[RMDB]
Source: RMDB library 15KLIB, as collected in RNAgym. The record gives the reactivity of an RNA of 170 nucleotides to DMS and 2A3. For 2A3 the reverse transcriptase was SuperScript II with manganese.

RNA sequence: GGGAACGACUCGAGUAGAGUCGAAAAACGCCAGGGAACAAGGAAAUAGGAGAAGGAACGGUAGAAAAGAGCGAGCCCUCCGAUCCGAUGGGGCCCUGGACCCCUCAGCUCUGGAGACUUCCGACCUACGCCAUGCGCUUCGGCGCAUGGAAAAGAAACAACAACAACAAC
Reactivity to DMS in 0.01 (KOAc 150mM, MgCl2 10mM, bicine 150mM(pH8.5), 24C), signal-to-noise 5, nucleotides 027 to 129: a000c200g030c020c000a100g000g000g000a100a050c090a130a130g010g020a020a060a090u040a110g030g000a010g020a100a060g020g010a010a100c070g000g090u040a140g000a070a090a130a040g030a070g040c060g030a150g010c000c020c030u030c000c000g000a110u030c030c010g030a020u070g000g060g000g010c000c000c000u000g030g010a110c010c000c000c050u030c090a120g020c080u030c030u000g030g010a100g030a100c080u030u010c040c060g020a100c040c020u020a010c140g030
Reactivity to 2A3 in 0.01 (KOAc 150mM, MgCl2 10mM, bicine 150mM(pH8.5), 24C), signal-to-noise 5, nucleotides 027 to 129: a000c060g020c000c000a010g000g010g010a070a070c050a070a050g060g040a030a110a040u120a080g000g020a010g060a080a100g050g000a070a050c050g010g050u150a060g150a030a080a010a000g100a040g080c040g000a020g020c010c000c000u010c000c000g020a030u010c010c000g050a040u100g010g020g040g000c000c010c000u010g010g020a000c000c000c000c000u030c010a010g010c000u000c040u070g040g010a050g030a050c030u050u000c010c020g040a090c010c000u030a040c040g000